Source information
The data come from the RNA Mapping Database (RMDB), library OK3TST. The record gives the reactivity of an RNA of 207 nucleotides to 2A3. For 2A3 the reverse transcriptase was SuperScript II with manganese. Reactivities are given for positions 27 through 156.

[RMDB]
RNA sequence: GGGAACGACUCGAGUAGAGUCGAAAAAGAUAGGGAGAAGGCUGCAAAGGAUUUAGGUUUAUUUAGUAGUUUGAUGUUUAAUGCUGACCGUGAUAUGAGUACUAUUGCGGCUUUUCCAUGGUUAGCAGGUUGGCGGUUUGGUAGACAAAUUAAUGUAGUGCGAUUAGUAGUUCGCUACUAAUCGCACAAAAGAAACAACAACAACAAC
Reactivity to 2A3 in 0.01 (KOAc 150mM, MgCl2 10mM, bicine 150mM(pH8.5), 24C), signal-to-noise 1, nucleotides 027 to 156: a000g080a050u160a050g000g020g030a020g000a080a000g030g030c010u030g030c090a000a040a060g070g010a080u130u130u190a100g030g000u050u090u070a110u110u200u030a080g020u000a000g040u000u110u020g020a020u090g080u090u100u200a160a060u060g000c000u000g000a010c000c000g000u000g000a000u000a070u200g010a000g020u090a090c060u080a160u200u290g150c150g000g000c060u000u000u080u000c060c000a010u010g000g000u020u070a000g000c000a000g030g000u030u070g030g040c040g030g000u000u110u020g060g000u070a090g000a010c040a020a110a030u170u180a040a120u230g070u100a070